[RMDB]
RNA sequence: GGGAACGACUCGAGUAGAGUCGAAAACAUGAAGAGAACACGUGCAUAACUGGAAACAGUAGCUUGUAGGGCAUGCAGACGCAAGUAGAAAGCACGUUCAAGAUUUGAAAUAAUCUUGAAGUUUUUGCAUUACGUGCCCUUUCGAGGGCACGUAAUGAAAAGAAACAACAACAACAAC
Reactivity to DMS in 0.01 (KOAc 150mM, MgCl2 10mM, bicine 150mM(pH8.5), 24C), signal-to-noise 3, nucleotides 027 to 126: c070a150u010g010a110a070g020a080g030a050a060c160a070c000g000u000g020c030a020u010a070a020c000u010g000g000a190a140a150c000a010g010u010a300g000c010u010u000g000u000a080g030g000g010c020a080u010g000c120a070g000a080c080g000c030a000a000g010u000a070g000a020a030a180g000c020a000c010g030u010u000c000a000a000g000a000u000u000u000g000a110a070a040u030a020a000u000c000u010u000g000a040a120g010u000u000u000u000u000g000
Reactivity to 2A3 in 0.01 (KOAc 150mM, MgCl2 10mM, bicine 150mM(pH8.5), 24C), signal-to-noise 4, nucleotides 027 to 126: c010a040u170g070a090a110g060a000g030a110a000c040a000c090g000u010g000c000a030u040a290a010c010u000g000g000a040a060a040c000a000g010u020a000g000c030u000u010g040u030a240g000g090g070c090a050u120g020c050a060g050a040c040g030c020a010a010g000u030a020g130a040a020a010g000c000a000c000g000u000u000c000a000a000g000a000u010u010u040g110a070a050a020u200a020a020u030c000u000u000g020a060a000g020u000u000u000u040u080g050

An RNA of 177 nucleotides, treated with DMS and 2A3 and read out base by base. The reactions ran in a buffer of 150 mM KOAc, 10 mM MgCl2 and 150 mM bicine (pH 8.5), at 24 C. The 2A3 profile rests on 2,682 reads.